[RMDB]
RNA sequence: GGGAACGACUCGAGUAGAGUCGAAAAGCUGCUGAUGUACUGCACCAUUGGGUGUAUUGCCGCUGCACCCGCUCUGCAGCACCGCCGGGGAUAUGACGAGAUGAUGGGAAUGAGCGGCCCGCUGCCGGCGACUACCAGUGUUCGCACUGGUAGUCGCAAAAGAAACAACAACAACAAC
Reactivity to 2A3 in 0.01 (KOAc 150mM, MgCl2 10mM, bicine 150mM(pH8.5), 24C), signal-to-noise 2, nucleotides 027 to 126: g020c010u000g040c020u010g060a080u140g070u140a080c040u080g020c030a070c040c080a070u160u220g080g010g020u020g000u060a070u050u190g010c000c020g000c010u010g010c010a010c000c000c020g000c020u050c000u030g020c010a010g000c020a020c010c010g020c020c010g000g000g020g020a020u040a050u300g090a040c080g030a030g020a100u140g030a040u030g000g000g050a070a080u090g010a070g060c000g030g000c010c010c010g090c000u060g000c000c010g030
Reactivity to DMS in 0.01 (KOAc 150mM, MgCl2 10mM, bicine 150mM(pH8.5), 24C), signal-to-noise 1, nucleotides 027 to 126: g020c040u040g110c000u000g030a140u010g030u010a190c180u000g000c020a090c100c030a150u100u110g000g000g000u010g040u000a000u080u000g030c000c080g060c090u000g000c000a020c070c020c020g000c150u000c050u000g010c000a000g000c060a200c100c120g000c020c000g000g000g000g000a100u050a030u000g070a140c080g000a160g000a060u030g000a030u010g020g000g040a090a130u010g070a120g090c080g000g000c030c000c150g000c010u000g000c020c000g000
An RNA of 177 nucleotides, treated with 2A3 and DMS and read out base by base.
Conditions: 150 mM KOAc, 10 mM MgCl2 and 150 mM bicine (pH 8.5), 24 C.
Source: RMDB library OK1LIB, as collected in RNAgym.
Reactivities are given for positions 27 through 126.